The record gives the reactivity of an RNA of 177 nucleotides to DMS and 2A3. DMS adducts were read by reverse transcription with MarathonRT. High 2A3 reactivity points to a flexible backbone, as in loops and unpaired stretches. Conditions: 150 mM KOAc, 10 mM MgCl2 and 150 mM bicine (pH 8.5), 24 C. It was measured as part of the RMDB libraries RFM100 and RFMREP.
RNA sequence: GGGAACGACUCGAGUAGAGUCGAAAAGAAAGAAAGCUUGACAGCAGGCAACGGAAUCCCAAAAGCAGCUGUUGUCUCCAGAGCAUUCCAGCUGCAGUUGGAUUUCGUUCCCUGCUAUCCUGCAAAAAUAGCCUUUAAGAUUCGUCUUAAAGGCUAUAAAAGAAACAACAACAACAAC
Reactivity to DMS in 0.01 (KOAc 150mM, MgCl2 10mM, bicine 150mM(pH8.5), 24C), signal-to-noise 9, nucleotides 027 to 126: g000a100a090a120g010a110a120a140g010c010u000u000g010a030c070a020g000c010a010g000g010c220a020a010c000g000g000a000a010u000c070c020c080a060a040a090a080g010c000a010g020c010u010g000u010u010g000u010c020u010c150c200a130g000a080g010c060a040u010u010c210c010a010g010c010u000g000c000a030g010u010u000g000g010a030u000u000u000c010g000u000u000c300c000c000u000g010c010u000a010u000c010c030u000g000c030a020a070a050a110
Reactivity to 2A3 in 0.01 (KOAc 150mM, MgCl2 10mM, bicine 150mM(pH8.5), 24C), signal-to-noise 9, nucleotides 027 to 126: g120a010a100a010g110a050a100a000g010c010u010u010g010a010c010a010g000c000a000g000g000c000a000a000c000g000g020a000a000u050c050c040c020a040a100a000a020g000c010a000g000c000u010g020u080u050g030u050c040u050c080c080a070g030a020g180c030a030u110u090c060c010a010g000c000u000g000c000a050g040u070u060g000g000a000u000u000u000c000g000u000u000c010c000c000u010g000c000u000a000u000c000c000u010g000c010a030a040a000a050